[RMDB]
RNA sequence: GGGAACGACUCGAGUAGAGUCGAAAAGAUAUGGACCUGAGGUGGGAGCUGUCGUCGGAAACGACGAUACAGCGAAGAACACCGAGGGUCCUAAGUCAAAAGGUGGUGCAGUUCGCUGCACCACCAACUGUCGAUAUCAGUUCGCUGAUAUCGACAGAAAAGAAACAACAACAACAAC
Reactivity to DMS in 0.01 (KOAc 150mM, MgCl2 10mM, bicine 150mM(pH8.5), 24C), signal-to-noise 1, nucleotides 027 to 126: g020a050u000a290u020g000g000a030c000c010u000g000a300g000g010u000g010g000g020a190g000c000u000g020u000c010g030u000c000g000g000a100a110a220c000g000a070c000g010a070u000a050c010a000g010c010g000a070a170g000a130a300c000a030c000c000g010a300g000g020g000u000c010c000u000a010a090g000u010c010a070a090a070a080g000g020u000g000g030u000g000c050a020g000u000u010c300g000c010u000g000c000a000c010c000a000c000c000a030a070